This 177-nucleotide RNA was probed chemically with DMS.

[RMDB]
RNA sequence: GGGAACGACUCGAGUAGAGUCGAAAAAACAUCAUCGACUGCGUGGCCAUCUUGCCCUUCUACUUGGAAGUGGGCCUGUCAGGUCUCAGCUCCAAAGCUGCCAAGGACGUGCUGGGCUUCCUGCGUGUACUAACGUCUCCUUCGGGAGACGUUAGUAAAAAGAAACAACAACAACAAC
Reactivity to DMS in 0.01 (KOAc 150mM, MgCl2 10mM, bicine 150mM(pH8.5), 24C), signal-to-noise 1, nucleotides 027 to 126: a110a050c070a080u000c110a050u020c030g020a070c040u000g010c100g030u000g020g000c040c090a030u010c020u000u000g000c020c020c010u030u000c040u000a160c030u000u020g000g030a060a010g010u000g020g000g020c010c000u000g010u020c160a070g060g030u000c010u000c010a050g000c000u030c060c240a110a100a120g000c010u000g000c080c020a060a080g020g000a050c210g000u020g000c040u000g000g000g000c030u010u010c030c010u000g000c190g000u010g020